[RMDB]
RNA sequence: GGGAACGACUCGAGUAGAGUCGAAAAGGCGAAUAUUGCACAAUGGGAGGAAGCCUGAUGCAGCGACGCCGCGUGAGGGAUGAAGGCCUUCGAGUUGUAAUCCUCUCUCAGCAGGGACGAAGCGCCAAUUAUUAUUGAUAUUCGUAUCAAUAAUAAUAAAAGAAACAACAACAACAAC
Reactivity to 2A3 in 0.01 (KOAc 150mM, MgCl2 10mM, bicine 150mM(pH8.5), 24C), signal-to-noise 6, nucleotides 027 to 126: g020g000c000g010a060a010u110a050u070u090g010c010a010c030a030a060u090g010g000g010a060g040g040a060a000g050c000c010u020g010a030u080g000c030a020g010c010g050a030c020g010c020c000g010c010g010u030g020a030g000g020g010a020u050g040a060a040g010g010c010c000u040u050c040g020a040g020u030u100g000u050a010a020u000c000c010u060c000u000c020u010c030a040g000c030a040g010g000g030a010c010g020a030a000g010c010g010c010c000a000
Reactivity to DMS in 0.01 (KOAc 150mM, MgCl2 10mM, bicine 150mM(pH8.5), 24C), signal-to-noise 9, nucleotides 027 to 126: g000g000c000g010a080a080u030a070u020u010g000c040a060c110a090a080u030g010g010g000a090g010g010a090a110g000c020c010u010g000a090u010g000c030a050g010c050g000a150c080g000c020c030g000c060g010u010g000a070g000g000g000a050u010g010a120a210g000g000c010c010u020u020c110g000a110g010u000u000g010u000a150a140u010c010c010u010c020u000c020u010c070a100g010c070a080g010g000g000a060c060g000a070a090g000c060g000c020c030a110